[RMDB]
RNA sequence: GGGAACGACUCGAGUAGAGUCGAAAACCGGGCGACGGGGCAGAGAGUGCCAGCCCGCAAGGGCAGGACCCCCGCGCGUCGUUUUUACGACCGCGGGGCAGCUCGCCAUAGCAACAGUUAUGUGGCCGUAUUUUAAGUGGUUCGCCACUUAAAAUACAAAAGAAACAACAACAACAAC
Reactivity to DMS in 0.01 (KOAc 150mM, MgCl2 10mM, bicine 150mM(pH8.5), 24C), signal-to-noise 2, nucleotides 027 to 126: c020c000g030g020g000c030g000a050c150g020g000g020g010c050a090g020a070g000a170g000u020g000c000c000a080g010c000c000c000g000c260a050a070g010g000g010c020a030g030g000a150c180c000c010c010c000g050c000g040c160g000u010c000g000u000u060u020u010u060a040c010g050a020c030c040g040c030g050g000g000g010c090a020g000c070u010c070g010c010c010a060u010a110g030c050a060a090c090a060g000u020u010a090u010g010u010g000g010c000c180
Reactivity to 2A3 in 0.01 (KOAc 150mM, MgCl2 10mM, bicine 150mM(pH8.5), 24C), signal-to-noise 3, nucleotides 027 to 126: c000c000g000g020g010c000g010a050c040g030g090g040g000c050a060g070a030g020a020g140u160g030c010c010a010g010c000c000c000g000c050a050a060g010g020g000c000a020g010g050a100c000c000c000c020c000g000c000g000c100g030u010c010g000u010u020u030u100u240a020c010g000a010c010c000g000c010g000g000g000g000c000a010g010c010u010c000g000c000c010a040u120a000g010c010a010a120c020a100g080u220u160a120u200g060u090g050g000c030c040
The record gives the reactivity of an RNA of 177 nucleotides to DMS and 2A3. High 2A3 reactivity points to a flexible backbone, as in loops and unpaired stretches. The data come from the RNA Mapping Database (RMDB), libraries RFM100 and RFMREP. High DMS reactivity at an A or C suggests that its Watson-Crick edge is free. For 2A3 the reverse transcriptase was SuperScript II with manganese.